This 207-nucleotide RNA was probed chemically with 2A3. For 2A3 the reverse transcriptase was SuperScript II with manganese.
RNA sequence: GGGAACGACUCGAGUAGAGUCGAAAAACUCACUUACUCCAUACCUCCGUAAUCUGACUGUAUGCUGUGGUCAGGGGACUCGCUACCCGCGCAGGCCGUUCUCCGCCGCCGCGAAGGUGCACCUCUCUUGGUCCCCGUGGUGCGCGUACUCGACGAGGACUGCUCCAAAUUUCGAUUUGGAGCAGUCAAAAGAAACAACAACAACAAC
Reactivity to 2A3 in 0.01 (KOAc 150mM, MgCl2 10mM, bicine 150mM(pH8.5), 24C), signal-to-noise 1, nucleotides 027 to 156: a000c030u070c020a030c030u130u170a030c010u090c090c010a020u020a140c010c060u110c000c070g120u050a090a080u060c010u070g090a020c000u040g050u070a050u060g020c060u090g000u050g070g000u060c040a070g010g000g030g010a000c030u030c140g000c050u100a050c000c010c000g000c000g000c050a080g020g000c000c000g020u040u030c040u000c040c010g020c000c020g000c010c000g010c000g040a190a070g000g000u050g000c050a010c000c070u150c000u080c020u150u220g000g000u030c000c000c000c000g000u000g000g000u040g000c110g000c000g000u050a070c040u000c050g200a120c020g060a020g000
As a SHAPE reagent, 2A3 marks flexible, mostly unpaired nucleotides at the ribose 2'-OH. Values cover nucleotides 27 to 156. The reactions ran in a buffer of 150 mM KOAc, 10 mM MgCl2 and 150 mM bicine (pH 8.5), at 24 C. Values are in units of 0.01, from 0 to 300, in steps of 10.